The record gives the reactivity of an RNA of 207 nucleotides to 2A3. Conditions: 150 mM KOAc, 10 mM MgCl2 and 150 mM bicine (pH 8.5), 24 C.
RNA sequence: GGGAACGACUCGAGUAGAGUCGAAAAGCAUUUCACUGUUAAAGAAUGAAGCAACUCUUAGGUCUUGAGGAUAAGUGCAGUAUUUAUAGGCUCUUAUCUAAUGCAUUUCCUUUUAUGGGUUGUUUUUGUUGGUGCUCCCAACAGUCACUCCUGUAAAACUAUGCCAGGUGUUCGCACCUGGCAUAGUAAAAGAAACAACAACAACAAC
Reactivity to 2A3 in 0.01 (KOAc 150mM, MgCl2 10mM, bicine 150mM(pH8.5), 24C), signal-to-noise 1, nucleotides 027 to 156: g020c020a020u040u140u200c100a130c000u120g040u300u280a050a140a140g070a030a160u130g020a040a000g070c030a000a000c000u020c030u000u110a070g020g010u020c030u050u130g030a000g000g000a000u000a000a000g000u000g000c020a000g130u190a150u110u300u040a300u160a040g140g000c000u000c000u060u000a000u000c010u030a000a090u100g000c000a000u010u000u080c000c000u100u030u000u020a100u140g000g000g000u000u020g000u000u080u040u080u090g020u030u030g000g020u040g000c030u060c000c000c020a020a000c000a000g030u070c040a010c130u040c040c010u030g030u040a000a300a000
Annotation
It was measured as part of the RMDB library OK3TST.